The record gives the reactivity of an RNA of 207 nucleotides to 2A3.
Reactivities are given for positions 27 through 156.
2A3 adducts were read by reverse transcription with SuperScript II with manganese.
RNA sequence: GGGAACGACUCGAGUAGAGUCGAAAAUUGAUUUGGGUGUGGCAUCUGUGUGUGUGGCCCUGGGCUGGUUCCUGGGUGUCCUGAUCGGGCUGUGUCCUGUGUGUCCUGCCUGAAGAAGGGAUCGGGGAGGUGCUGGAGAAGGAAGACUGCAUGCAGGGUUGUAAGGAAUGUUCGCAUUCCUUACAACAAAAGAAACAACAACAACAAC
Reactivity to 2A3 in 0.01 (KOAc 150mM, MgCl2 10mM, bicine 150mM(pH8.5), 24C), signal-to-noise 3, nucleotides 027 to 156: u100u060g060a060u080u070u130g050g000g010u040g000u080g040g030c040a060u000c080u020g070u030g010u000g020u000g030u050g100g000c000c000c050u030g000g000g020c050u100g080g050u120u060c020c000u030g000g020g010u060g030u020c000c020u030g030a050u060c020g010g000g000c020u010g060u040g020u160c010c030u130g070u060g050u070g030u180c010c000u010g040c000c010u040g040a080a060g080a020a020g070g010g000a050u070c050g010g000g000g030a020g000g030u030g000c040u030g030g010a080g010a060a030g040g000a050a000g050a030c050u060g020c040a030u080g030c020a010g130g010
2A3 is a SHAPE reagent: it acylates the 2'-hydroxyl of flexible nucleotides of all four kinds. For 2A3, 2,251 sequencing reads were counted.